Chemical mapping of a 207-nucleotide RNA with 2A3 and DMS. The 2A3 profile rests on 888 reads. DMS adducts were read by reverse transcription with MarathonRT. Reactivities are given for positions 27 through 156.
RNA sequence: GGGAACGACUCGAGUAGAGUCGAAAAGGAUGCCUGCUCCGGAACGGAGCAGGUCGCAGUGACUCGGAAGCUCGGACUGUCUAGUAACAACAUAGGUGACCGCAAAUCCGCAAGGACUCGUACGGUCACUGAAUCCUGCCCAGUGCAGGUAUCUGAACCUCAGUUAUACGUUCGCGUAUAACUGAGGAAAAGAAACAACAACAACAAC
Reactivity to 2A3 in 0.01 (KOAc 150mM, MgCl2 10mM, bicine 150mM(pH8.5), 24C), signal-to-noise 2, nucleotides 027 to 156: g090g000a060u100g040c000c000u030g020c010u010c000c000g180g100a210a100c170g040g010a000g000c000a000g000g000u000c000g040c020a030g050u060g100a000c000u000c000g000g050a200a030g010c000u010c040g030g090a140c130u070g000u010c000u000a020g100u050a100a040c070a010a010c000a080u210a100g050g000u000g010a000c000c010g000c020a030a150a000u000c020c000g050c100a090a090g010g000a020c020u040c080g080u170a090c020g020g000u000c000a000c000u000g000a000a000u010c000c010u010g000c010c010c050a090g010u070g100c000a000g000g000u020a040u000c000u030g080a100a080
Reactivity to DMS in 0.01 (KOAc 150mM, MgCl2 10mM, bicine 150mM(pH8.5), 24C), signal-to-noise 1, nucleotides 027 to 156: g020g000a140u000g010c000c000u000g000c020u000c000c030g080g000a190a180c140g010g020a020g000c020a020g000g040u000c010g010c000a000g040u000g000a020c020u020c010g080g010a120a170g030c020u010c000g000g020a050c030u010g000u000c020u010a150g000u000a160a090c090a050a080c060a060u000a300g020g000u000g010a020c050c000g050c000a070a120a110u000c000c020g000c210a190a140g060g000a040c010u000c070g040u000a020c000g010g000u000c020a030c000u000g010a100a160u020c020c000u030g000c000c030c120a190g060u000g050c000a010g020g020u010a000u000c000u000g000a140a300